[RMDB]
Structure probing data (DMS) for a 177-nucleotide construct. Reactivities are given for positions 27 through 126.
RNA sequence: GGGAACGACUCGAGUAGAGUCGAAAAGAUAUGGACCCUACAGUUAACUAUAUGGUCGAGACGGCAUCAUCGGAAACGAUGAUGCGUCGAAGACAGCCAUACGAAUUAACUGUAGGGUCCUAAGUCACAGAGACGUUAUGUUCGCAUAACGUCUCUGAAAAGAAACAACAACAACAAC
Reactivity to DMS in 0.01 (KOAc 150mM, MgCl2 10mM, bicine 150mM(pH8.5), 24C), signal-to-noise 2, nucleotides 027 to 126: g010a050u020a300u000g000g010a030c020c000c000u010a020c000a020g000u000u000a000a040c050u000a290u000a030u000g000g000u020c010g000a130g060a030c010g020g000c000a010u010c000a000u000c000g000g020a130a110a240c000g020a000u000g010a000u000g010c000g010u000c000g000a050a100g020a100c300a050g000c030c000a000u020a020c160g010a130a130u010u000a000a020c000u000g020u010a020g000g000g000u000c000c000u000a000a030g000u020c020a220